[RMDB]
RNA sequence: GGGAACGACUCGAGUAGAGUCGAAAAUCGUGACCGAGCUAGACUCGGCUGUAGUCUAGGUCCUGACUGGCCGCCACGCUGCGAUGCUGAUACCAAGUUCAGUGUGAGAUUUCACGCGAGAGCGCAACUAGCUCCAUUAUUUCGAUAAUGGAGCUAGAAAAGAAACAACAACAACAAC
Reactivity to 2A3 in 0.01 (KOAc 150mM, MgCl2 10mM, bicine 150mM(pH8.5), 24C), signal-to-noise 6, nucleotides 027 to 126: u050c010g030u060g060a080c030c040g020a020g040c030u100a030g040a150c020u010c030g090g000c070u090g070u110a030g020u000c030u020a040g050g050u020c010c020u040g060a080c010u020g040g000c020c020g000c010c010a040c040g020c050u040g010c020g040a060u080g000c020u020g010a020u040a100c020c040a060a040g020u020u020c020a010g000u010g020u040g050a050g030a300u210u270u050c020a010c010g040c020g020a130g000a010g200c020g000c000a040a040
Reactivity to DMS in 0.01 (KOAc 150mM, MgCl2 10mM, bicine 150mM(pH8.5), 24C), signal-to-noise 7, nucleotides 027 to 126: u000c050g010u000g010a150c050c020g010a100g000c020u010a050g000a090c010u000c020g010g030c100u020g010u000a040g010u000c040u000a060g020g010u000c020c050u000g000a090c080u000g010g010c020c060g010c050c030a060c080g010c040u000g020c060g010a070u000g010c040u010g000a120u010a170c100c040a070a080g010u000u000c030a160g000u000g000u000g000a050g000a150u010u000u000c030a030c030g010c020g000a130g000a090g010c030g010c150a060a160
Structure probing data (2A3 and DMS) for a 177-nucleotide construct. For DMS the reverse transcriptase was MarathonRT. For 2A3 the reverse transcriptase was SuperScript II with manganese.